[RMDB]
Chemical mapping of a 177-nucleotide RNA with 2A3 and DMS. For 2A3 the reverse transcriptase was SuperScript II with manganese. In probing experiments dimethyl sulfate is read out at A N1 and C N3, which are open when not base-paired. The data come from the RNA Mapping Database (RMDB), libraries RFM100 and RFMREP. Reactivities are given for positions 27 through 126.

RNA sequence: GGGAACGACUCGAGUAGAGUCGAAAAGAACGCCUCUAAGUCAGAAUCCAAGCUAGCAACCGGCGCCUGUGCCCGCCGCUCGCCCCGACCCACAUUAGGGCGUUCGCGCCCCAAGGGCCCGUGCCAUCAAUAUAUAUCCAUUCGUGGAUAUAUAUUGAAAAGAAACAACAACAACAAC
Reactivity to 2A3 in 0.01 (KOAc 150mM, MgCl2 10mM, bicine 150mM(pH8.5), 24C), signal-to-noise 9, nucleotides 027 to 126: g020a040a010c010g020c020c010u070c030u100a080a050g050u060c050a050g060a080a050u030c040c020a050a020g020c020u060a020g030c030a040a070c030c030g030g000c020g040c010c020u060g030u090g030c000c010c000g020c010c000g020c010u030c030g010c000c000c000c010g030a050c010c010c010a050c000a050u080u140a030g000g020g000c000g010u020u030c040g010c010g020c000c000c000c020a050a070g030g020g000c000c050c050g040u070g030c010c000a030u020
Reactivity to DMS in 0.01 (KOAc 150mM, MgCl2 10mM, bicine 150mM(pH8.5), 24C), signal-to-noise 5, nucleotides 027 to 126: g000a100a060c060g000c020c010u030c040u010a060a070g010u020c090a070g010a150a090u010c030c040a090a100g010c050u000a060g020c060a090a090c120c040g000g010c060g010c040c030u010g000u010g020c020c020c010g010c030c040g010c040u010c070g020c030c010c000c030g010a100c030c030c040a070c110a120u020u010a080g000g000g000c000g030u000u010c070g010c070g030c030c010c000c080a060a090g000g010g010c000c040c080g010u010g000c070c050a130u000